[RMDB]
RNA sequence: GGGAACGACUCGAGUAGAGUCGAAAAGUUGACCGGUUCGCCGGUCAACAAAGAAAGCGGAAAGCACCAGGAAAGGGAGGUGCGGGCCGCAACCACGCAUAAAAACGAGAUCCUUCGGGAUCUCGAACUGUUGUUGUUACUUCGGUAACAACAACAGAAAAGAAACAACAACAACAAC
Reactivity to 2A3 in 0.01 (KOAc 150mM, MgCl2 10mM, bicine 150mM(pH8.5), 24C), signal-to-noise 3, nucleotides 027 to 126: g000u010u000g000a010c020c010g020g010u020u050c150g020c070c000g000g000u000c000a000a000c000a010a000a000g050a030a040a010g010c010g010g010a040a040a000g000c010a000c000c000a050g080g210a260a150a060g080g030g010a110g020g000u000g000c000g020g060g000c000c010g000c000a010a000c000c010a050c050g130c070a150u200a210a090a040a030a030c020g000a000g010a000u030c000c010u060u130c240g070g000g000a010u000c000u000c000g000a010a000
Reactivity to DMS in 0.01 (KOAc 150mM, MgCl2 10mM, bicine 150mM(pH8.5), 24C), signal-to-noise 1, nucleotides 027 to 126: g010u010u000g020a010c000c000g010g000u010u040c190g020c000c040g000g000u000c020a000a000c000a030a130a110g000a020a120a220g000c010g010g000a040a060a150g000c010a040c010c000a300g000g000a120a100a060g020g010g040a190g010g000u000g010c010g000g040g030c000c010g030c010a120a080c070c000a130c210g010c260a110u000a010a120a130a120a110c010g000a020g030a010u000c000c000u000u030c180g030g000g000a000u000c030u000c000g010a020a010